[RMDB]
RNA sequence: GGGAACGACUCGAGUAGAGUCGAAAAGCGAGGCGAGGGGAGAUUAAUGUCGCAGUACAAAGAUUGCCACUGGCUGUCUCAACUUGACCGAUGGCUUGCCAUGGCCAUUGAGAGCCAUUAGUGACCGGAACCACUCUAAAUUCGUUUAGAGUGGUUCAAAAGAAACAACAACAACAAC
Reactivity to DMS in 0.01 (KOAc 150mM, MgCl2 10mM, bicine 150mM(pH8.5), 24C), signal-to-noise 9, nucleotides 027 to 126: g010c070g020a140g010g010c040g010a070g010g000g000g000a070g000a060u010u010a090a150u010g010u000c140g020c070a060g010u010a080c110a070a100a170g000a070u000u000g010c010c060a050c080u000g010g010c050u000g000u010c010u000c030a030a050c160u000u000g000a080c030c020g010a060u000g000g000c020u000u000g010c080c060a030u000g000g010c010c010a060u000u000g000a120g000a090g010c010c010a040u010u010a080g010u010g000a150c040c080g020
Reactivity to 2A3 in 0.01 (KOAc 150mM, MgCl2 10mM, bicine 150mM(pH8.5), 24C), signal-to-noise 6, nucleotides 027 to 126: g020c020g040a010g020g000c030g020a040g010g010g050g010a020g010a030u080u120a090a100u120g030u040c040g000c090a010g040u080a050c050a050a150a010g110a090u050u080g010c020c020a080c050u030g040g000c030u030g060u030c010u000c010a040a060c040u100u090g090a180c010c010g070a060u050g070g000c000u010u070g020c020c000a030u050g010g000c010c020a040u100u180g050a090g010a020g020c010c000a000u000u030a040g040u030g050a040c040c020g030
This 177-nucleotide RNA was probed chemically with DMS and 2A3.
Values cover nucleotides 27 to 126.
The 2A3 profile rests on 10,325 reads.
High 2A3 reactivity points to a flexible backbone, as in loops and unpaired stretches.
DMS adducts were read by reverse transcription with MarathonRT.
DMS (dimethyl sulfate) methylates the pairing face of unpaired adenines and cytosines.